[RMDB]
RNA sequence: GGGAACGACUCGAGUAGAGUCGAAAAAAAUAAUUAGAUGUCCUUUUUUAGGAGGGCUUAGUUUUUUGUACCCAGUUUAAGAAUACCUUUAUCAUGUGAUUCUAAAGUAUCCAGAGAAUAUCUGUAUAUUCUAGAUUAUUUUCGAAUAAUCUAGAAUAAAAGAAACAACAACAACAAC
Reactivity to 2A3 in 0.01 (KOAc 150mM, MgCl2 10mM, bicine 150mM(pH8.5), 24C), signal-to-noise 2, nucleotides 027 to 126: a000a000a000u190a030a000u100u050a040g080a240u080g000u060c000c000u060u080u000u000u090u300a150g090g020a000g000g020g000c000u020u010a030g000u020u000u010u020u020u040g100u060a080c010c010c020a030g050u070u030u140a050a020g030a050a020u160a190c000c010u180u190u140a190u230c110a050u150g080u100g080a080u150u000c030u080a010a040a090g040u030a050u030c070c000a010g010a010g050a190a040u060a070u130c030u010g030u040a120u000
Reactivity to DMS in 0.01 (KOAc 150mM, MgCl2 10mM, bicine 150mM(pH8.5), 24C), signal-to-noise 2, nucleotides 027 to 126: a010a010a010u020a030a070u000u010a090g000a080u000g020u000c000c000u000u000u020u090u040u090a100g000g010a000g000g000g000c000u010u000a030g000u000u000u000u000u000u000g000u030a150c030c000c010a130g000u040u040u000a050a100g000a030a020u030a030c040c060u010u010u040a080u030c140a130u000g000u020g000a050u010u000c020u010a050a080a060g000u010a050u000c020c000a020g000a060g000a090a070u030a010u000c000u000g010u020a130u010